Source: RMDB libraries RFM100 and RFMREP, as collected in RNAgym. Chemical mapping of a 177-nucleotide RNA with DMS and 2A3. Values are in units of 0.01, from 0 to 300, in steps of 10.
[RMDB]
RNA sequence: GGGAACGACUCGAGUAGAGUCGAAAAAGUCUCGCUUUUGGACAAAACUAACCCACAGAUCUUUUAUUAUCCUUGUGCUUGUGGCAUUAUCCCCUGUCCAAUGCACACGAGAAACGUAGAAGAACAGGGUAGUAUGCCAUUUCGAUGGCAUACUACCAAAAGAAACAACAACAACAAC
Reactivity to DMS in 0.01 (KOAc 150mM, MgCl2 10mM, bicine 150mM(pH8.5), 24C), signal-to-noise 1, nucleotides 027 to 126: a120g000u010c010u000c120g000c030u000u020u010u020g020g000a100c090a050a020a110a120c080u000a120a110c040c000c000a100c140a120g000a090u020c000u010u000u020u000a010u000u000a290u000c030c010u000u000g020u000g000c000u000u020g000u020g000g000c030a010u030u020a200u000c000c030c010c190u000g000u000c000c020a040a010u030g000c040a030c030a000c120g000a120g020a000a050a200c300g010u000a010g030a040a060g000a000a060c170a040g000
Reactivity to 2A3 in 0.01 (KOAc 150mM, MgCl2 10mM, bicine 150mM(pH8.5), 24C), signal-to-noise 6, nucleotides 027 to 126: a000g090u040c060u070c070g090c060u080u050u100u160g050g000a010c040a020a160a030a020c060u080a060a080c020c020c000a030c030a030g120a150u030c010u000u050u000u020a090u070u040a020u040c020c000u010u020g020u020g020c010u030u030g060u270g070g000c010a030u010u140a140u230c020c020c000c010u000g000u000c000c000a010a020u140g030c010a000c000a000c000g120a150g050a300a050a010c030g010u030a000g000a050a000g000a040a070c040a060g070